[RMDB]
RNA sequence: GGGAACGACUCGAGUAGAGUCGAAAAGAUAUGGAUCUAUGGAGACGCGUCCACUCCCCACCGCUUGUUAUAUUCGGAAACGAAUAUAACAAGCGAGGUGGACCGUCUAUGAAGUAGAUCCUAAGUCCAUAACCCUUUUGUUCGCAAAAGGGUUAUGAAAAGAAACAACAACAACAAC
Reactivity to 2A3 in 0.01 (KOAc 150mM, MgCl2 10mM, bicine 150mM(pH8.5), 24C), signal-to-noise 2, nucleotides 027 to 126: g120a050u260a230u300g020g000a000u030c030u010a010u030g060g010a030g000a010c000g040c180g070u010c010c010a010c020u180c070c020c000c020a000c010c010g000c020u000u000g000u010u000a010u000a020u000u000c000g000g030a000a140a030c030g000a000a000u010a000u010a000a000c000a010a010g010c000g000a000g040g000u010g000g010a000c010c000g010u000c000u030a300u060g000a000a000g020u010a010g000a000u000c000c000u000a020a020g050u090c030
Reactivity to DMS in 0.01 (KOAc 150mM, MgCl2 10mM, bicine 150mM(pH8.5), 24C), signal-to-noise 3, nucleotides 027 to 126: g000a180u000a180u000g010g020a010u000c000u000a000u000g000g010a010g020a000c000g020c230g000u000c000c010a020c010u010c110c010c000c070a300c090c010g000c010u010u020g000u000u000a000u000a000u000u000c000g010g000a130a120a210c000g000a010a010u000a010u000a000a000c000a000a000g000c000g000a010g020g000u000g000g000a000c010c000g010u000c000u000a060u030g000a100a230g000u010a000g000a000u000c000c000u000a030a140g010u010c130